[RMDB]
RNA sequence: GGGAACGACUCGAGUAGAGUCGAAAAUUAAAGUACGUAGAAGCGGCGUGAAGCAUGUAGAUAGCUUUGCGAGCAUAUCGAGCUACAUGUGAGCGAAAGCGGUUACGUACAACGAUAUGCAAAAAAAGUGAAGUAAACAGUUCGCUGUUUACUUCACAAAAGAAACAACAACAACAAC
Reactivity to DMS in 0.01 (KOAc 150mM, MgCl2 10mM, bicine 150mM(pH8.5), 24C), signal-to-noise 4, nucleotides 027 to 126: u000u000a070a110a140g000u000a010c010g000u000a020g000a110a090g010c030g010g020c060g050u000g020a100a230g000c010a010u000g000u010a060g010a060u000a100g010c100u000u000u000g010c130g000a100g010c030a030u000a030u000c040g030a120g010c030u000a000c010a010u000g010u000g000a270g000c030g010a050a060a120g000c000g010g010u000u000a000c010g020u000a000c010a050a060c060g010a030u000a010u010g010c040a020a000a020a100a080a040a080
Reactivity to 2A3 in 0.01 (KOAc 150mM, MgCl2 10mM, bicine 150mM(pH8.5), 24C), signal-to-noise 4, nucleotides 027 to 126: u100u020a060a000a000g010u000a000c010g000u010a000g020a130a010g120c030g200g010c030g030u030g070a050a000g030c000a000u010g000u010a000g030a230u070a040g020c030u100u060u200g090c130g040a020g030c010a020u030a030u140c040g010a020g010c010u000a000c010a020u010g130u130g030a020g020c040g080a180a030a010g010c010g030g000u040u010a000c010g000u010a000c000a010a000c000g010a020u040a050u150g050c030a040a070a020a010a010a070a040

Structure probing data (DMS and 2A3) for a 177-nucleotide construct. Reactivities are given for positions 27 through 126. Conditions: 150 mM KOAc, 10 mM MgCl2 and 150 mM bicine (pH 8.5), 24 C. The DMS profile rests on 3,853 reads. It was measured as part of the RMDB library M2PK90. For DMS the reverse transcriptase was MarathonRT.